[RMDB]
Conditions: 150 mM KOAc, 10 mM MgCl2 and 150 mM bicine (pH 8.5), 24 C. Chemical mapping of a 177-nucleotide RNA with DMS and 2A3. The DMS profile rests on 1,131 reads. The data come from the RNA Mapping Database (RMDB), library TTRDEL. The 2A3 profile rests on 2,954 reads. For 2A3 the reverse transcriptase was SuperScript II with manganese.
RNA sequence: GGGAACGACUCGAGUAGAGUCGAAAAGAUAUGGACUGUACGAGCUGUGAACUACCGACACUCGGAAACGAGAAAUCGGUAGGGAGCUCAGUACAGUCCUAAGUCAAAAGAUCUGUUCGCAGAUCAACCUACGCGAUAUGUUCGCAUAUCGCGUAGGAAAAGAAACAACAACAACAAC
Reactivity to DMS in 0.01 (KOAc 150mM, MgCl2 10mM, bicine 150mM(pH8.5), 24C), signal-to-noise 2, nucleotides 027 to 126: g010a070u000a300u020g010g000a010c010u000g000u000a000c010g000a010g030c000u000g040u000g010a110a160c000u000a020c000c020g000a090c300a300c020u020c010g000g000a080a090a080c000g000a020g000a070a090a170u000c000g010g000u010a000g020g010g010a000g000c000u000c000a060g020u000a010c020a010g010u000c000c010u000a000a090g020u000c010a120a050a060a090g000a010u000c010u010g020u010u010c170g000c090a010g000a020u000c000a100a150
Reactivity to 2A3 in 0.01 (KOAc 150mM, MgCl2 10mM, bicine 150mM(pH8.5), 24C), signal-to-noise 2, nucleotides 027 to 126: g040a000u030a020u100g000g000a000c010u000g020u000a000c010g000a000g000c000u070g120u020g300a040a000c010u000a000c010c000g020a020c030a060c170u010c000g000g000a040a040a040c040g010a000g030a020a230a020u050c020g000g020u020a000g000g010g000a000g000c000u000c000a010g000u000a000c000a010g000u000c000c000u000a000a000g000u000c010a020a000a080a160g010a010u010c010u030g040u140u180c300g000c120a000g010a030u000c000a010a040